Chemical mapping of a 207-nucleotide RNA with DMS and 2A3.
For 2A3 the reverse transcriptase was SuperScript II with manganese.
The RNA was probed in 150 mM KOAc, 10 mM MgCl2 and 150 mM bicine (pH 8.5) at 24 C.
[RMDB]
RNA sequence: GGGAACGACUCGAGUAGAGUCGAAAAUCAUUGAGAUGCUGGGCGCUAUGGUCGUCCUCCUCCGGCUGACCUCCUUCUCAGCCGCUGACCGGCGCCGCACAGGCGGCAUCUCAGCUUCGUGUGCAAAAAAAGAAUGGUCGGUUCGCCGACCAUUCAAGUACUACAUUGACUUCGGUCAAUGUAGUACAAAAGAAACAACAACAACAAC
Reactivity to DMS in 0.01 (KOAc 150mM, MgCl2 10mM, bicine 150mM(pH8.5), 24C), signal-to-noise 2, nucleotides 027 to 156: u010c050a080u000u000g010a020g020a030u010g030c020u020g020g030g040c000g000c040u000a060u030g100g000u010c010g010u010c030c060u000c020c020u000c050c010g010g000c000u010g000a050c060c120u030c170c070u000u000c080u000c000a040g010c010c010g010c030u000g010a030c010c040g010g000c010g060c000c010g080c120a110c080a120g010g000c010g000g050c000a010u000c010u000c000a040g000c090u000u000c150g040u000g050u010g020c010a000a000a090a110a100a170a270g000a020a020u010g000g040u000c000g020g020u000u010c300g020c040c000g010a020c000c000a000u000u000c000a060a160
Reactivity to 2A3 in 0.01 (KOAc 150mM, MgCl2 10mM, bicine 150mM(pH8.5), 24C), signal-to-noise 2, nucleotides 027 to 156: u240c060a000u050u060g010a000g000a000u020g000c010u020g000g010g000c010g000c020u060a220u300g070g000u050c030g040u050c010c020u050c000c000u050c020c010g000g000c000u010g000a010c020c050u140c030c030u210u110c020u030c020a000g010c000c020g000c040u050g000a010c010c040g000g000c000g020c020c000g010c040a050c010a030g150g000c020g000g040c000a000u000c000u000c000a010g010c080u170u180c060g200u100g000u050g150c110a070a210a050a040a000a000a100g000a000a000u000g000g000u010c020g050g000u090u050c130g050c080c000g000a000c000c000a020u000u000c000a000a000